The record gives the reactivity of an RNA of 207 nucleotides to 2A3 and DMS. It was measured as part of the RMDB library OK3TST.
RNA sequence: GGGAACGACUCGAGUAGAGUCGAAAAGCAGCUCCAAAAUACGUUUGUGACUGGUCGUCGCUGCGGGAAGACCUUAAGCUCUUUGGCAUCCGUAAUAGCACAUUAUCAGCACUUAUGCCAUGUGAGUCAUCUUCCCAAGUUUCCAACAGUACAAACGAUCUAGAGAUGUAUUCGUACAUCUCUAGAUAAAAGAAACAACAACAACAAC
Reactivity to 2A3 in 0.01 (KOAc 150mM, MgCl2 10mM, bicine 150mM(pH8.5), 24C), signal-to-noise 9, nucleotides 027 to 156: g010c010a000g010c020u110c130c070a070a060a030a050u200a060c020g000u010u010u000g050u050g220a090c020u030g060g070u120c050g040u050c060g010c010u010g000c010g000g000g000a000a000g010a020c040c000u050u100a090a030g020c000u000c000u020u010u010g010g000c000a010u020c050c040g070u090a120a140u080a230g080c050a060c030a200u130u260a160u300c110a040g030c030a010c050u050u030a000u010g000c000c000a020u050g090u070g050a000g020u090c020a020u000c000u000u010c000c000c000a020a030g030u010u010u000c000c000a010a010c000a010g000u010a000c000a000a010a000c000g010
Reactivity to DMS in 0.01 (KOAc 150mM, MgCl2 10mM, bicine 150mM(pH8.5), 24C), signal-to-noise 5, nucleotides 027 to 156: g020c030a090g010c050u000c040c020a060a060a100a140u000a100c050g020u000u000u000g020u000g000a070c030u010g010g010u000c070g010u010c130g010c010u000g000c060g050g010g010a040a060g000a040c080c100u010u010a110a200g010c010u000c020u000u000u000g000g000c000a030u000c050c080g020u000a050a100u000a060g000c090a120c130a170u000u000a120u000c080a120g020c060a130c070u000u000a040u000g030c000c010a020u000g000u000g000a040g030u000c080a100u000c020u000u000c000c000c000a030a130g000u000u010u000c020c000a070a070c030a080g010u010a090c050a030a040a050c040g010

The RNA was probed in 150 mM KOAc, 10 mM MgCl2 and 150 mM bicine (pH 8.5) at 24 C. For DMS the reverse transcriptase was MarathonRT. DMS (dimethyl sulfate) methylates the pairing face of unpaired adenines and cytosines.